[RMDB]
RNA sequence: GGGAACGACUCGAGUAGAGUCGAAAAGAUAUGGACCGUAGGGAGCUGUUGGUCGGAAACGACCAUCAGCGAAGAACUACCGUCCUAAGUCAAAACUGCAACCAAGACUUCGGUCUUGGUUGCAGAACUGAGAUAAGAGGUUCGCCUCUUAUCUCAGAAAAGAAACAACAACAACAAC
Reactivity to 2A3 in 0.01 (KOAc 150mM, MgCl2 10mM, bicine 150mM(pH8.5), 24C), signal-to-noise 1, nucleotides 027 to 126: g000a010u010a020u040g010g000a000c000c020g020u000a000g000g040g000a030g010c000u000g010u010u010g010g000u010c000g000g000a000a010a010c000g000a000c000c000a010u000c000a020g000c000g000a040a000g020a000a000c000u000a000c030c010g000u000c000c000u010a000a000g000u020c000a010a000a040a180c010u010g020c000a000a030c020c000a000a020g020a010c010u070u220c300g070g000u020c000u000u010g010g000u010u010g010c000a010g000a000a020
Reactivity to DMS in 0.01 (KOAc 150mM, MgCl2 10mM, bicine 150mM(pH8.5), 24C), signal-to-noise 2, nucleotides 027 to 126: g000a010u000a010u000g000g010a010c000c300g000u000a010g000g020g000a010g030c000u000g010u000u000g010g000u000c000g010g010a000a000a020c000g010a010c000c000a000u000c000a010g000c000g000a060a060g020a110a200c010u000a000c000c180g000u000c000c000u000a000a050g000u000c010a110a070a070a180c020u000g010c000a000a000c010c000a010a000g020a010c000u000u000c210g030g020u000c000u000u000g000g000u000u000g020c000a000g000a030a090
Structure probing data (2A3 and DMS) for a 177-nucleotide construct.
Values cover nucleotides 27 to 126.
The RNA was probed in 150 mM KOAc, 10 mM MgCl2 and 150 mM bicine (pH 8.5) at 24 C.
The 2A3 profile rests on 5,994 reads.
The data come from the RNA Mapping Database (RMDB), library TTRDEL.